[RMDB]
RNA sequence: GGGAACGACUCGAGUAGAGUCGAAAACAUCUUUCCUCCCUACACAGUGACUCCAGCUUGGGAGGGGGAGGGCUAGGCUGAGCCAGCACUCCCUGUGGUGUCUGCCUGCCACGUGCAGCUCUGGAGUAAAACCUGGAGAAGUUCGCUUCUCCAGGAAGCCUGUCUUCUAGUUCGCUAGAAGACAGGCAAAAGAAACAACAACAACAAC
Reactivity to 2A3 in 0.01 (KOAc 150mM, MgCl2 10mM, bicine 150mM(pH8.5), 24C), signal-to-noise 1, nucleotides 027 to 156: c040a030u030c080u140u150u110c020c000u080c020c000c020u170a080c100a050c060a080g110u020g110a040c030u000c000c020a000g000c010u030u050g000g000g000a020g040g000g000g010g010a010g020g000g000c010u040a090g050g000c130u190g080a030g030c040c010a000g000c000a030c000u020c040c000c020u000g030u010g070g000u000g050u040c050u070g020c000c000u030g100c010c030a110c140g130u230g050c000a000g010c010u010c020u040g000g000a020g010u000a000a000a000a000c000c000u000g000g000a000g020a000a030g000u000u090c090g000c090u000u000c010u000c000c000a000g000g010a000a000
This 207-nucleotide RNA was probed chemically with 2A3.
The reactions ran in a buffer of 150 mM KOAc, 10 mM MgCl2 and 150 mM bicine (pH 8.5), at 24 C.
For 2A3, 646 sequencing reads were counted.